RNA sequence: GGGAACGACUCGAGUAGAGUCGAAAAGAUAUGGACGACAGUUGCCGAUAAGCUCCCAUCGGAAACGAUGGAGAGCUUUUGACGGCACUGUCGUCCUAAGUCAAAGAAUGCGCUUCGGCGCAUUCAACGUGUAAGAUGUCUUCGGACAUCUUACACGAAAAGAAACAACAACAACAAC
Reactivity to 2A3 in 0.01 (KOAc 150mM, MgCl2 10mM, bicine 150mM(pH8.5), 24C), signal-to-noise 2, nucleotides 027 to 126: g000a000u030a010u040g000g020a000c020g020a010c010a030g070u260u120g250c030c060g170a300u150a290a000g040c000u020c010c000c010a000u000c000g010g000a020a000a010c020g000a020u020g000g020a150g010a000g070c060u020u010u010u030g020a020c040g020g060c020a000c000u020g000u000c000g050u000c000c000u010a000a010g000u000c000a010a000a040g010a000a000u010g000c030g020c000u080u190c300g160g000c010g040c000a010u020u000c000a000a010
Reactivity to DMS in 0.01 (KOAc 150mM, MgCl2 10mM, bicine 150mM(pH8.5), 24C), signal-to-noise 2, nucleotides 027 to 126: g000a010u000a080u020g020g000a030c000g000a010c000a000g000u010u000g040c000c000g010a080u020a020a010g020c000u000c010c000c010a010u000c000g010g000a030a020a020c000g000a000u000g000g000a110g000a020g030c000u000u000u000u000g010a190c050g020g010c000a030c000u000g000u010c000g010u010c000c000u000a000a050g000u000c000a110a140a190g000a010a010u000g020c000g020c010u000u010c240g050g020c000g030c000a000u000u000c000a100a120
Chemical mapping of a 177-nucleotide RNA with 2A3 and DMS.
The 2A3 profile rests on 2,903 reads.
DMS adducts were read by reverse transcription with MarathonRT.